[RMDB]
Structure probing data (DMS and 2A3) for a 177-nucleotide construct. 2A3 adducts were read by reverse transcription with SuperScript II with manganese. For DMS, 6,726 sequencing reads were counted. The data come from the RNA Mapping Database (RMDB), library TTRINS.

RNA sequence: GGGAACGACUCGAGUAGAGUCGAAAAGAUAUGGACCUCAUAUCCAGCAUCGAUCCUUUCUCCAAUAGAAUUAAUCGGAAACGAUUAAUUCUAUUGGAGAAAGGGGAGCUGGUAUAGGUCCUAAGUCGUCAUUAAUAGAGUUCGCUCUAUUAAUGACAAAAGAAACAACAACAACAAC
Reactivity to DMS in 0.01 (KOAc 150mM, MgCl2 10mM, bicine 150mM(pH8.5), 24C), signal-to-noise 4, nucleotides 027 to 126: g010a130u000a300u000g010g010a010c000c000u000c300a010u000a020u030c000c010a010g010c000a300u010c240g010a030u010c010c000u000u000u000c000u000c000c000a010a010u000a010g000a030a000u000u000a000a000u000c000g000g010a150a120a230c000g000a010u010u000a000a010u000u000c000u000a000u000u000g010g010a000g000a000a000a000g000g000g000g010a000g020c000u000g000g010u000a000u000a010g000g010u000c000c000u000a020a090g010u010c140
Reactivity to 2A3 in 0.01 (KOAc 150mM, MgCl2 10mM, bicine 150mM(pH8.5), 24C), signal-to-noise 3, nucleotides 027 to 126: g090a030u130a100u240g000g000a010c000c010u080c150a030u040a060u230c020c010a010g010c000a150u300c060g060a090u070c000c000u000u000u010c000u010c000c000a020a010u000a010g010a010a000u010u000a010a000u020c030g030g080a140a040a050c000g010a000u000u000a020a000u020u000c000u000a000u000u000g010g000a000g000a000a010a010g000g010g000g000a000g010c000u000g010g000u000a010u000a000g000g000u000c000c000u000a050a040g110u060c080

DMS adducts were read by reverse transcription with MarathonRT.